[RMDB]
RNA sequence: GGGAACGACUCGAGUAGAGUCGAAAAGGUUUCGACUUGGAAUGGUUGUUCCAGGAGAAGCGGGCCGAGGACCCAGGGUCAACUCGUUAACGAUCCUUGGAAACCUAUAAGUGCCGAGAACACUCGCACUGACUUCGCUCUCGCUGCCUGAUCAGUGGUUUUACCUUAUGUUCGCAUAAGGUAAAACAAAAGAAACAACAACAACAAC
Reactivity to DMS in 0.01 (KOAc 150mM, MgCl2 10mM, bicine 150mM(pH8.5), 24C), signal-to-noise 3, nucleotides 027 to 156: g030g010u010u000u000c010g050a030c020u000u010g000g030a140a120u010g040g000u000u020g030u000u010c000c000a160g000g010a140g000a040a060g000c040g000g020g030c100c030g030a070g010g010a140c090c010c040a060g020g040g010u020c030a120a100c100u010c120g010u000u000a080a150c130g000a050u000c010c010u000u010g050g000a090a030a150c070c040u000a170u010a060a020g020u000g040c030c030g020a200g000a070a090c120a060c020u000c050g020c020a040c020u000g000a070c030u000u010c070g020c010u000c040u020c040g010c000u000g030c010c030u000g010a110u000c040a090g000u000g020
Reactivity to 2A3 in 0.01 (KOAc 150mM, MgCl2 10mM, bicine 150mM(pH8.5), 24C), signal-to-noise 3, nucleotides 027 to 156: g190g020u050u030u000c000g000a020c000u020u040g070g080a120a050u090g050g030u020u020g010u000u000c020c000a040g050g030a080g020a140a020g000c020g000g010g000c050c020g030a030g000g030a150c000c010c030a000g020g000g000u000c010a040a080c070u060c210g140u120u140a070a010c090g000a000u020c000c000u000u030g060g000a100a090a070c030c010u050a050u020a130a010g020u020g150c230c100g020a020g010a120a060c240a110c070u000c000g000c000a000c010u020g060a050c030u030u050c150g010c020u020c010u000c040g040c040u030g000c000c020u070g050a140u120c080a050g130u170g010